[RMDB]
RNA sequence: GGGAACGACUCGAGUAGAGUCGAAAAUGCGGACGGUAUCGCCAUCCCUUCCACUCCGGUGCGGGUGACGUUCGAGGAGGGGUAUGUCGUCUCGGUGGAAGGGGAAGACGAGGCGGCGGAGCUCCUCGUAAGUUGGGGAUUUCGAUCCCCAACUUACAAAAGAAACAACAACAACAAC
Reactivity to 2A3 in 0.01 (KOAc 150mM, MgCl2 10mM, bicine 150mM(pH8.5), 24C), signal-to-noise 2, nucleotides 027 to 126: u230g000c020g020g010a010c010g040g060u170a090u160c010g020c020c000a070u060c010c000c000u020u030c030c010a040c030u080c080c150g140g040u070g030c190g060g030g000u010g020a070c020g020u000u020c020g020a030g180g000a010g000g020g000g010u010a010u010g030u020c000g010u000c000u010c020g000g040u060g010g000a040a010g020g010g000g020a050a020g050a010c000g000a010g000g000c000g010g000c030g020g000a010g010c010u000c000c000u000c010
Reactivity to DMS in 0.01 (KOAc 150mM, MgCl2 10mM, bicine 150mM(pH8.5), 24C), signal-to-noise 3, nucleotides 027 to 126: u000g010c020g000g010a010c030g020g010u020a160u010c040g030c010c030a100u010c000c000c000u000u000c010c010a090c040u000c180c110g020g020u000g010c130g010g020g020u000g030a070c040g010u000u010c040g010a220g030g000a020g010g000g000g010u000a160u010g000u000c000g020u000c000u000c010g020g040u000g010g010a030a010g000g000g010g000a060a080g020a130c000g000a040g000g000c030g020g000c000g020g000a210g010c020u000c000c000u000c030